Chemical mapping of a 170-nucleotide RNA with DMS and 2A3.
[RMDB]
RNA sequence: GGGAACGACUCGAGUAGAGUCGAAAAAAGGUGGAAAGAAAGGAGGGACCCUCCCGAUCCGAGGGGCCCAACCACCAAGUUUGGAGAGCACUCCGGGCCGAAUGGUCGAGUAGCACUCAGAGGGAGGAUAGCACACACUUCGGUGUGUGCAAAAGAAACAACAACAACAAC
Reactivity to DMS in 0.01 (KOAc 150mM, MgCl2 10mM, bicine 150mM(pH8.5), 24C), signal-to-noise 2, nucleotides 027 to 129: a110a000g040g040u010g010g010a130a070a010g020a070a120a100g030g020a150g070g020g000a030c000c000c000u000c000c000c000g000a070u070c120c240g010a060g000g000g020g000c000c040c030a090a030c020c030a040c050c030a160a060g010u060u000u000g020g050a100g030a130g010c170a080c000u030c020c090g040g020g020c000c000g050a090a050u060g000g000u040c050g010a060g020u050a110g020c000a100c060u000c030a070g000a080g000g000g000a050g020g000a100u000a030
Reactivity to 2A3 in 0.01 (KOAc 150mM, MgCl2 10mM, bicine 150mM(pH8.5), 24C), signal-to-noise 2, nucleotides 027 to 129: a000a000g060g000u060g020g000a100a080a020g200a070a060a050g270g030a100g000g000g000a040c020c050c010u030c050c000c000g050a060u060c020c030g000a040g000g010g000g000c000c000c000a000a010c000c000a000c000c010a010a020g010u000u000u070g070g020a030g000a000g030c020a020c080u000c020c000g000g000g000c010c020g050a050a090u260g030g020u020c000g000a020g000u090a000g000c030a000c070u020c010a000g040a020g010g010g000a000g020g010a020u040a050

Description:
The 2A3 profile rests on 3,102 reads. The DMS profile rests on 7,745 reads.